[RMDB]
Background
Chemical mapping of a 207-nucleotide RNA with 2A3.
RNA sequence: GGGAACGACUCGAGUAGAGUCGAAAAUGGCUUCGACGUGGAUCGCGAAACCUGAGGUGCAUGCCGAGGUGCAGAUGACCUCGUAAAUCCAUCUGCAAACCAAAUAAACGCCAACGACGACGUUUACGCACUGGCCGCUUAAGCCGGCCGGCCUCUGGAUACGACGUAGCUUCGGCUACGUCGUAUCAAAAGAAACAACAACAACAAC
Reactivity to 2A3 in 0.01 (KOAc 150mM, MgCl2 10mM, bicine 150mM(pH8.5), 24C), signal-to-noise 2, nucleotides 027 to 156: u080g060g010c010u030u020c040g060a060c060g040u090g080g000a090u090c020g040c010g030a080a050a050c000c010u070g090a060g100g000u000g020c030a040u120g000c020c010g000a000g040g000u020g020c010a000g010a030u080g090a120c000c050u070c030g020u070a000a000a050u020c030c000a000u020c010u000g020c030a080a130a010c040c040a090a040a000u220a000a020a000c070g020c050c030a090a080c110g030a020c060g000a000c030g020u020u040u020a040c030g000c040a020c160u050g010g000c000c000g010c020u120u060a120a000g020c010c000g000g000c000c000g000g000c000c000u050c070u090g000
The reactions ran in a buffer of 150 mM KOAc, 10 mM MgCl2 and 150 mM bicine (pH 8.5), at 24 C. It was measured as part of the RMDB library RSTRND.